Source: RMDB library M2PK50, as collected in RNAgym. The record gives the reactivity of an RNA of 177 nucleotides to DMS. Reactivities are rounded to 0.1 and cut off at 0 and 3.
RNA sequence: GGGAACGACUCGAGUAGAGUCGAAAAUAACGUACUUUCGAGUACGUUAAGUCUCCCGGCGCUAGCAGGGCUGAAGAGAAGAUGGAGGAGCUGGUGGUGGAAUUAGGGGGGGAUUCGUCCCCCCCAAGUAGAGACCAUCGUUCGCGAUGGUCUCUACAAAAGAAACAACAACAACAAC
Reactivity to DMS in 0.01 (KOAc 150mM, MgCl2 10mM, bicine 150mM(pH8.5), 24C), signal-to-noise 1, nucleotides 027 to 126: u000a010a010c000g000u000a010c000u000u000u020c260g020a020g020u000a010c000g020u000u000a010a090g000u000c130u000c000c020c030g000g020c120g000c040u030a050g000c110a030g020g000g000c060u000g000a090a040g010a080g010a090a060g000a060u000g020g010a110g000g020a090g020c040u000g010g020u010g010g050u000g000g020a110a090u020u010a120g000g000g000g030g000g010g020a010u000u020c180g000u000c000c000c010c010c000c000c000a010a020